[RMDB]
RNA sequence: GGGAACGACUCGAGUAGAGUCGAAAAAUGCUCAGGUCCGCCGCAUCUCCUGGGUCGUGGGGUCGGUCGGCUGGCAGGCAAUUUCAAGCGGUUCCUCGUGCCGUUUUGCAGGCUAGCCGGCCCCCGAGAUGCGAAGAUCUUUCGAGAUCUUCGCAUCAAAAGAAACAACAACAACAAC
Reactivity to DMS in 0.01 (KOAc 150mM, MgCl2 10mM, bicine 150mM(pH8.5), 24C), signal-to-noise 1, nucleotides 027 to 126: a070u020g010c010u000c040a150g030g020u010c010c030g000c010c020g030c060a070u000c080u000c070c020u000g000g000g000u000c050g000u040g000g000g000g030u050c150g000g020u010c010g010g000c000u000g000g020c000a010g010g010c000a000a020u010u020u000c250a140a040g020c030g000g010u000u030c050c030u020c070g050u020g010c000c000g010u010u000u000u000g030c000a000g000g030c000u000a000g000c000c000g000g000c000c000c020c030c020g000a160
Reactivity to 2A3 in 0.01 (KOAc 150mM, MgCl2 10mM, bicine 150mM(pH8.5), 24C), signal-to-noise 4, nucleotides 027 to 126: a000u090g010c010u000c020a020g040g010u020c020c020g040c000c010g050c030a050u010c050u020c020c010u000g030g010g030u020c020g060u140g020g020g000g020u140c100g020g000u010c000g020g000c000u000g000g030c000a000g000g000c010a020a050u090u210u220c090a140a090g030c000g030g000u060u130c040c030u080c100g050u120g000c010c000g010u070u030u030u010g010c010a000g010g010c000u000a000g000c000c000g000g020c010c000c000c000c000g020a060
Annotation: Structure probing data (DMS and 2A3) for a 177-nucleotide construct. It was measured as part of the RMDB library RFM100. The 2A3 profile rests on 3,265 reads.